Chemical mapping of a 170-nucleotide RNA with DMS and 2A3. Reactivities are given for positions 27 through 129. It was measured as part of the RMDB library 15KLIB.
[RMDB]
RNA sequence: GGGAACGACUCGAGUAGAGUCGAAAAGACAUUCCACAGAGUUUGACUUUUUCAUAUGAUGGGUUACGUGGCGCAAUACGUAAAGCUAAAGAUUAUGGUUUUACUGUUUUUGUGUGCACAGACAACUGAACGUGUUAGUUCGCUAACACGAAAAGAAACAACAACAACAAC
Reactivity to DMS in 0.01 (KOAc 150mM, MgCl2 10mM, bicine 150mM(pH8.5), 24C), signal-to-noise 9, nucleotides 027 to 129: g030a090c140a100u050u010c010c020a150c170a090g020a090g000u000u020u030g040a170c070u010u000u000u020u010c090a090u080a100u070g020a100u050g030g020g000u000u000a090c130g030u000g000g010c050g000c000a000a000u000a030c000g000u000a000a010a000g010c000u000a040a080a100g040a130u060u050a110u000g000g030u020u020u000u020a000c020u040g030u000u000u000u000u000g010u000g030u030g010c020a020c000a080g020a040c120a020a050c020u000g030a130a130
Reactivity to 2A3 in 0.01 (KOAc 150mM, MgCl2 10mM, bicine 150mM(pH8.5), 24C), signal-to-noise 9, nucleotides 027 to 129: g050a020c030a050u050u020c000c010a120c090a150g120a040g050u040u050u070g110a120c020u040u040u030u090u100c100a110u140a100u300g130a080u120g090g030g010u080u080a080c080g000u030g010g010c000g000c010a000a020u010a010c010g010u000a000a000a010g000c010u040a080a150a070g200a120u220u190a150u290g010g000u000u010u000u010a040c060u090g090u070u080u020u070u020g010u000g010u090g090c000a000c000a010g080a020c020a080a050c040u060g030a070a020